Source: RMDB libraries RFM100 and RFMREP, as collected in RNAgym. Chemical mapping of a 177-nucleotide RNA with 2A3 and DMS. For 2A3 the reverse transcriptase was SuperScript II with manganese.

RNA sequence: GGGAACGACUCGAGUAGAGUCGAAAAGCAUAUUGUUUGGGAAACCAAACAGAGUAACUUAUCUUAAGUUACUUAUUUUCACUUCCUGUAUAUUUAUUUUAGACCCUUUUGGUUAAACACCGCUCUAUCUCUUCUUACGUUUCGACGUAAGAAGAGAAAAAGAAACAACAACAACAAC
Reactivity to 2A3 in 0.01 (KOAc 150mM, MgCl2 10mM, bicine 150mM(pH8.5), 24C), signal-to-noise 7, nucleotides 027 to 126: g060c050a030u140a050u140u110g000u010u000u010g000g030g000a030a020a040c000c000a000a000a000c000a000g000a000g000u000a000a000c000u010u060a050u300c040u130u210a040a000g000u000u000a000c000u020u020a100u070u050u070u090c100a070c040u030u040c000c010u010g130u030a080u010a030u080u180u020a170u040u100u040u090a130g040a110c030c020c000u050u070u120u240g050g000u030u080a060a050a020c040a010c020c020g040c040u010c020u040a060
Reactivity to DMS in 0.01 (KOAc 150mM, MgCl2 10mM, bicine 150mM(pH8.5), 24C), signal-to-noise 1, nucleotides 027 to 126: g010c100a080u000a060u010u000g000u000u000u020g000g010g000a150a120a230c000c000a000a030a000c000a060g020a000g000u000a000a050c000u000u000a060u080c140u030u030a000a010g000u020u000a000c000u000u040a020u000u020u000u000c110a100c130u000u000c000c000u000g020u000a110u050a020u000u010u000a030u010u000u000u100a100g010a120c050c060c030u020u000u020u010g050g000u000u000a100a070a130c120a050c100c020g010c090u020c060u000a170
Background:
The RNA was probed in 150 mM KOAc, 10 mM MgCl2 and 150 mM bicine (pH 8.5) at 24 C. Values cover nucleotides 27 to 126.